Conditions: 150 mM KOAc, 10 mM MgCl2 and 150 mM bicine (pH 8.5), 24 C. An RNA of 207 nucleotides, treated with 2A3 and read out base by base. 2A3 adducts were read by reverse transcription with SuperScript II with manganese. The 2A3 profile rests on 451 reads. It was measured as part of the RMDB library OK3TST.
[RMDB]
RNA sequence: GGGAACGACUCGAGUAGAGUCGAAAAUGCGCAGCUUGUUUAUGAAUGGUCGCCACUGGAACAUCUUUUUCAUGAUGACGACCCAGUACGUGAUGGACAUGACACCUAUGAUUCGUUCCAACACCGAUUACGUCUUUGUCCUUCGUGACAAUGUGAACUCCUGGAAAACGUUCGCGUUUUCCAGGAGAAAAGAAACAACAACAACAAC
Reactivity to 2A3 in 0.01 (KOAc 150mM, MgCl2 10mM, bicine 150mM(pH8.5), 24C), signal-to-noise 1, nucleotides 027 to 156: u070g000c060g000c080a110g000c060u090u050g060u130u280u070a060u190g070a110a040u160g030g000u000c000g010c010c030a000c030u000g030g000a010a010c040a230u130c090u170u170u090u260u130c120a110u120g100a180u000g010a090c020g020a060c000c000c000a050g020u030a020c180g010u100g060a090u020g020g020a010c030a040u090g000a010c010a000c060c010u010a060u100g010a010u050u120c000g000u100u060c000c000a050a040c020a080c070c010g070a000u120u210a050c020g010u040c030u030u010u040g020u000c010c030u140u150c020g010u110g040a000c010a000a090u050g010u000g110a010a010